RNA sequence: GGGAACGACUCGAGUAGAGUCGAAAAAGCCGGUACGCCGGCAGGCUGACAAAAUCCUUUCCCAACCUCCACGUGGUGUCGGCUGGAUAAUGCAUUAGAAAUGUUGCAUUUACCAACUGGGAAGGAACUCAAGAGCAUAUUUCGAUAUGCUCUUGAGAAAAGAAACAACAACAACAAC
Reactivity to 2A3 in 0.01 (KOAc 150mM, MgCl2 10mM, bicine 150mM(pH8.5), 24C), signal-to-noise 2, nucleotides 027 to 126: a050g190c130c300g000g010u100a080c300g120c300c300g030g000c300a300g010g000c080u020g010a020c030a000a030a010a170u150c010c000u030u290u060c000c000c000a000a030c000c000u000c030c000a150c230g080u300g050g000u020g010u020c000g040g000c000u000g000g000a010u030a060a030u010g010c010a020u030u070a190g150a140a140a050u140g060u100u050g020c000a000u020u050u020a060c000c000a050a020c010u020g010g000g010a000a000g000g020a020a030
Structure probing data (2A3) for a 177-nucleotide construct.
The reactions ran in a buffer of 150 mM KOAc, 10 mM MgCl2 and 150 mM bicine (pH 8.5), at 24 C.
The data come from the RNA Mapping Database (RMDB), library RFM100.